[RMDB]
RNA sequence: GGGAACGACUCGAGUAGAGUCGAAAAGCCUUACGAUUCGUCGUAAGGCAUACAAAGUUUUGGCACUAUGAGCCCGCAGCGUUGGUGCUCGCACGCGGUGCAAUACGACGGAUUUCGAUCCGUCGAAUCCGUCUUGAGGAUUCGUCCUCAAGACGGAAAAAGAAACAACAACAACAAC
Reactivity to DMS in 0.01 (KOAc 150mM, MgCl2 10mM, bicine 150mM(pH8.5), 24C), signal-to-noise 2, nucleotides 027 to 126: g000c000c000u000u000a000c000g000a010u010u010c180g010u040c000g000u010a000a010g000g000c000a020u020a020c110a100a090a120g020u020u000u010u010g000g010c000a050c040u000a070u010g000a130g020c020c030c040g000c020a200g030c130g010u000u000g000g010u010g030c030u000c060g000c130a090c210g030c090g020g000u000g040c030a040a050u000a180c030g000a000c010g000g000a030u000u000u000c110g000a000u000c000c010g010u000c010g020a050a070
Reactivity to 2A3 in 0.01 (KOAc 150mM, MgCl2 10mM, bicine 150mM(pH8.5), 24C), signal-to-noise 2, nucleotides 027 to 126: g000c010c000u020u010a010c010g010a020u020u070c180g030u000c000g000u140a000a000g020g000c000a000u030a010c010a000a110a030g000u040u050u100u130g110g020c000a010c030u000a060u260g020a010g030c000c000c000g000c040a300g100c060g110u170u130g050g020u130g050c040u020c010g020c030a090c110g130c080g000g000u040g000c000a030a020u100a060c040g010a000c000g010g000a010u050u060u080c180g060a000u010c010c000g000u000c010g010a000a030